[RMDB]
An RNA of 207 nucleotides, treated with 2A3 and read out base by base.

RNA sequence: GGGAACGACUCGAGUAGAGUCGAAAAGCGGAAUACGACUGGGAUCACCGCACAGGCUGCCCGUUUUAACUUUGGGGAAUAGCAAUGGCUAACGAACUUGUGAUUACAGCCAGCUCUCUCGCUGAGCGAGGCAUUGACGGCGCUACCUGGAGCGCCCCAUCAGGGUGUUCUUCGGAACACCCUGAUGAAAAGAAACAACAACAACAAC
Reactivity to 2A3 in 0.01 (KOAc 150mM, MgCl2 10mM, bicine 150mM(pH8.5), 24C), signal-to-noise 1, nucleotides 027 to 156: g020c010g000g100a070a070u180a200c110g040a040c090u130g010g040g000a080u060c050a020c100c020g100c000a080c010a050g090g000c010u040g020c000c000c000g000u140u000u000u120a130a090c090u190u170u250g000g010g000g020a020a020u000a040g000c060a010a110u040g000g000c050u000a010a060c040g030a010a000c000u080u070g060u090g090a060u090u200a090c090a090g000c010c020a010g000c000u000c010u010c010u030c040g020c180u060g010a010g000c050g060a160g000g000c090a110u000u110g030a000c000g000g000c020g010c010u010a010c000c050u020g010g000a010g000c000g000c060c030c000
2A3 adducts were read by reverse transcription with SuperScript II with manganese. The data come from the RNA Mapping Database (RMDB), library OK3TST. Values are in units of 0.01, from 0 to 300, in steps of 10. The reactions ran in a buffer of 150 mM KOAc, 10 mM MgCl2 and 150 mM bicine (pH 8.5), at 24 C.